[RMDB]
RNA sequence: GGGAACGACUCGAGUAGAGUCGAAAAGGAGGACGAAGCAUAUUUCUGUUUCUGGAGGAUUAUUUAUAAUCUGCCGGAAAGUCGUGCAGGUGGCUGGGAUAUGUUCAGUCUGGUAGAAUUAAGCACGAAAACGUGUCCUUGUUCGCAAGGACACGAACCACAUAGAGAACUUCGGUUCUCUAUGUGGAAAAGAAACAACAACAACAAC
Reactivity to 2A3 in 0.01 (KOAc 150mM, MgCl2 10mM, bicine 150mM(pH8.5), 24C), signal-to-noise 3, nucleotides 027 to 156: g060g010a020g020g010a010c040g010a050a000g020c040a030u050a070u090u080u060c080u100g080u010u040u000c010u030g000g020a030g020g010a010u010u010a010u010u300u020a090u040a040a010u010c010u050g080c000c010g000g030a050a040a020g090u090c040g050u100g060c030a040g070g120u090g030g000c010u020g010g000g010a030u040a020u090g110u070u050c040a020g020u000c030u030g010g040u050a040g070a110a100u140u130a130a010g050c050a020c080g040a010a030a080a030c010g020u000g000u010c000c000u000u030g010u030u040c160g000c110a010a000g000g000a010c010a000c000g000a000a000
Reactivity to DMS in 0.01 (KOAc 150mM, MgCl2 10mM, bicine 150mM(pH8.5), 24C), signal-to-noise 1, nucleotides 027 to 156: g030g020a180g020g000a070c060g000a110a210g000c020a060u000a080u000u000u000c020u000g030u020u000u000c000u000g030g010a020g000g010a020u000u000a030u000u000u000a060u000a090a020u000c010u030g000c000c010g000g010a020a030a070g020u010c040g040u000g020c060a140g030g010u000g000g000c040u000g010g020g000a090u000a010u010g020u010u010c050a180g040u000c030u000g020g060u020a070g000a100a090u000u000a060a100g000c020a070c030g010a070a060a050a130c020g010u010g000u000c010c000u010u000g060u010u000c270g070c000a010a020g000g000a010c000a010c000g000a000a060